Structure probing data (2A3 and DMS) for a 177-nucleotide construct. Reactivities are given for positions 27 through 126. The reactions ran in a buffer of 150 mM KOAc, 10 mM MgCl2 and 150 mM bicine (pH 8.5), at 24 C. For 2A3, 5,657 sequencing reads were counted. For DMS, 3,146 sequencing reads were counted.
RNA sequence: GGGAACGACUCGAGUAGAGUCGAAAAGAUAUGGAUGAACUGGAGCGAAGCACAACGAAGAACCUAGUUCUAUCGGAAACGAUAGAACUAGGGGAGUUGACUUCGCUAUGAAGGUUCAUCCUAAGUCCAGGUCUUAAAAGUUCGCUUUUAAGACCUGAAAAGAAACAACAACAACAAC
Reactivity to 2A3 in 0.01 (KOAc 150mM, MgCl2 10mM, bicine 150mM(pH8.5), 24C), signal-to-noise 3, nucleotides 027 to 126: g090a020u130a050u210g020g000a000u010g000a000a030c030u040g050g110a010g000c000g030a000a000g030c250a080c020a300a010c050g240a300a130g020a040a020c000c000u020a000g010u010u000c000u030a010u000c010g010g040a070a050a040c010g000a010u000a000g000a000a000c010u000a000g010g000g020g000a030g000u010u010g000a030c000u000u010c000g010c010u010a040u020g000a000a020g030g000u000u000c000a000u000c000c000u000a030a000g020u020c050
Reactivity to DMS in 0.01 (KOAc 150mM, MgCl2 10mM, bicine 150mM(pH8.5), 24C), signal-to-noise 3, nucleotides 027 to 126: g000a110u010a300u000g000g000a010u000g000a030a010c000u000g000g010a000g010c000g000a020a010g040c140a120c000a020a010c000g010a150a170g000a180a300c000c000u000a000g010u000u000c000u000a030u010c010g020g000a150a070a170c000g020a020u000a000g000a000a000c000u000a000g000g000g000g000a040g020u000u000g000a300c020u010u000c000g020c000u000a030u020g000a150a200g000g000u000u000c000a000u000c000c000u000a020a080g000u010c040